[RMDB]
RNA sequence: GGGAACGACUCGAGUAGAGUCGAAAAAGCUCGCUGUGACAGGGAGAUUAAAAAUUACAUUCCUCCGAAAUGUAAGAAAGGGUAAGAAAGGAAAGAAAAAGGAUCGCAAUGCUCCUAGAAGGCCACCAUCUGCCUUCUUCCUGUUUUGCUCUGAACAAUAUGCUGAAAAUUUCGAUUUUCAGCAUAUAAAAGAAACAACAACAACAAC
Reactivity to DMS in 0.01 (KOAc 150mM, MgCl2 10mM, bicine 150mM(pH8.5), 24C), signal-to-noise 3, nucleotides 027 to 156: a140g020c010u000c050g080c020u000g030u000g020a180c090a090g030g010g030a100g000a180u010u000a020a080a080a120a170u000u000a020c000a050u000u010c010c020u030c140c080g010a110a040a030u010g010u000a040a040g000a100a120a100g000g000g020u000a110a060g010a060a030a050g000g000a050a040a180g010a050a040a080a080a090g000g030a050u000c040g010c050a100a090u020g010c100u000c010c010u000a140g000a030a040g000g010c000c090a180c100c180a050u000c040u000g010c020c000u000u000c010u000u000c000c010u000g010u010u000u000u000g010c010u000c020u000g000a050a100c080a080
Reactivity to 2A3 in 0.01 (KOAc 150mM, MgCl2 10mM, bicine 150mM(pH8.5), 24C), signal-to-noise 2, nucleotides 027 to 156: a000g070c040u050c020g120c070u050g050u090g160a060c070a010g010g060g010a060g040a020u120u180a070a110a050a000a020u030u010a010c010a020u030u030c020c040u090c000c040g030a070a000a030u040g000u030a000a020g050a100a100a020g030g000g010u050a040a030g020a070a050a010g000g000a080a040a020g050a030a150a100a020a000g000g000a010u060c060g000c170a140a160u270g010c020u010c000c000u020a040g040a020a010g030g010c050c010a140c060c030a200u030c060u120g000c010c000u000u020c000u000u010c000c000u010g010u040u060u040u010g020c010u040c020u030g000a000a000c000a060
Notes:
Structure probing data (DMS and 2A3) for a 207-nucleotide construct. The reactions ran in a buffer of 150 mM KOAc, 10 mM MgCl2 and 150 mM bicine (pH 8.5), at 24 C. The DMS profile rests on 5,709 reads.